[RMDB]
RNA sequence: GGGAACGACUCGAGUAGAGUCGAAAACCAGCAGCCAUGACCUGCCAGGCUGCGGUGCGGCUCGCCGCACAGGUCAUCCCUCAUCGGGCGCGUCCUGCGUCCUUCCACGCCAACCCACAAGGGAUCUAAAACACGUUGGGCUUCGGCCCAACGUGAAGCUUAUUAAUGCGUUCGCGCAUUAAUAAGCAAAAGAAACAACAACAACAAC
Reactivity to 2A3 in 0.01 (KOAc 150mM, MgCl2 10mM, bicine 150mM(pH8.5), 24C), signal-to-noise 2, nucleotides 027 to 156: c000c010a000g030c010a000g020c000c000a160u140g000a020c000c010u110g070c130c070a030g000g000c000u000g000c000g000g000u000g020c000g000g030c060u090c180g190c050c000g080c000a020c000a010g010g030u020c030a040u030c040c010c020u080c040a070u140c100g000g020g000c020g000c000g060u280c050c100u160g010c000g040u040c000c090u060u030c010c020a070c040g010c020c030a090a050c040c030c000a070c080a170a070g040g000g000a020u020c030u120a040a070a050a010c000a000c000g000u000u000g000g000g010c020u030u050c090g060g030c000c000c010a000a000c000g000u000g000a000a000